Chemical mapping of a 177-nucleotide RNA with 2A3. Reactivities are given for positions 27 through 126. For 2A3 the reverse transcriptase was SuperScript II with manganese. Source: RMDB library OK2TST, as collected in RNAgym.

RNA sequence: GGGAACGACUCGAGUAGAGUCGAAAAGAGCCAACAUGCAAAUCAAAAAACAUUUAUGAACUGAUUUCUUAGCUUUGGACUUGACAACUGACGAAUGCUCUGGGGGUGACCUGGCCCUUGCUGUCCGCCGCAUGGCGAUAUUCGUAUCGCCAUGCGGAAAAGAAACAACAACAACAAC
Reactivity to 2A3 in 0.01 (KOAc 150mM, MgCl2 10mM, bicine 150mM(pH8.5), 24C), signal-to-noise 1, nucleotides 027 to 126: g080a040g000c000c000a030a010c030a030u160g050c060a040a000a070u040c020a010a040a070a050a160a110c080a100u220u300u210a140u220g060a050a040c080u010g000a080u050u020u010c010u000u070a070g060c000u070u050u070g060g000a130c020u000u080g070a030c060a130a060c080u070g070a030c060g040a090a060u000g040c040u080c040u070g000g060g000g060g020u010g040a000c000c000u010g040g000c000c030c010u020u080g070c000u020g030u120c030c000g050